[RMDB]
RNA sequence: GGGAACGACUCGAGUAGAGUCGAAAAGAUCAGAUGCAGUGUCGUCUGGCAGGUGUCUGGUUGAAGCCGUGGGCUGUGUGGUCAAGUACAUGCACGAUGUGUACGCGUGACCAGAUGAUCACGCAUGGGGUGUAUCAACGUUCGCGUUGGUAUACCCAAAAGAAACAACAACAACAAC
Reactivity to 2A3 in 0.01 (KOAc 150mM, MgCl2 10mM, bicine 150mM(pH8.5), 24C), signal-to-noise 9, nucleotides 027 to 126: g020a030u020c010a000g010a020u020g000c020a090g300u010g030u070c130g120u140c240u300g010g000c010a010g010g010u010g010u000c010u010g010g040u010u050g040a030a010g030c030c010g010u020g010g030g000c060u030g010u030g020u010g040g000u000c010a030a030g010u010a010c000a010u030g040c080a020c200g130a270u130g010u010g010u030a010c030g030c110g100u030g000a010c000c000a000g010a040u020g000a010u010c000a000c000g000c010a020u050g020
Reactivity to DMS in 0.01 (KOAc 150mM, MgCl2 10mM, bicine 150mM(pH8.5), 24C), signal-to-noise 9, nucleotides 027 to 126: g000a030u010c000a010g010a020u010g000c010a060g020u010g020u010c010g010u040c190u040g020g010c020a030g010g010u000g010u000c010u000g000g010u000u010g000a090a080g010c070c010g030u000g000g000g000c050u010g030u010g010u000g000g000u000c010a040a090g010u000a030c030a020u010g010c090a160c210g010a090u010g010u000g000u010a010c050g000c130g000u010g000a020c010c020a050g000a060u010g000a090u010c010a010c000g010c020a130u030g010